[RMDB]
This 177-nucleotide RNA was probed chemically with DMS. Reactivities are given for positions 27 through 126. It was measured as part of the RMDB library OK2TRN.

RNA sequence: GGGAACGACUCGAGUAGAGUCGAAAAGAGAGAGGGCAUCAGGAAGUUUGUAAGAGGGCCUUUCUCUCAGCCUGAGAAGAGAUGGCCGAUGACCAGUAAGAAGGUUCUCCAAAUAGGCGGUCAACUAUAGCCUACGUGUUUUCGAACACGUAGGCUAAAAAGAAACAACAACAACAAC
Reactivity to DMS in 0.01 (KOAc 150mM, MgCl2 10mM, bicine 150mM(pH8.5), 24C), signal-to-noise 1, nucleotides 027 to 126: g000a040g000a090g050a040g020g010g050c050a150u020c040a090g010g000a140a170g020u010u020u010g010u020a090a180g020a100g010g000g000c020c010u030u000u010c000u000c000u000c010a060g010c020c000u000g000a190g000a070a060g020a020g000a130u010g000g010c030c020g000a090u000g010a050c010c000a040g020u000a160a080g000a090a240g000g010u010u000c110u010c050c030a080a080a130u000a070g000g050c020g000g010u000c020a010a090c080u000a130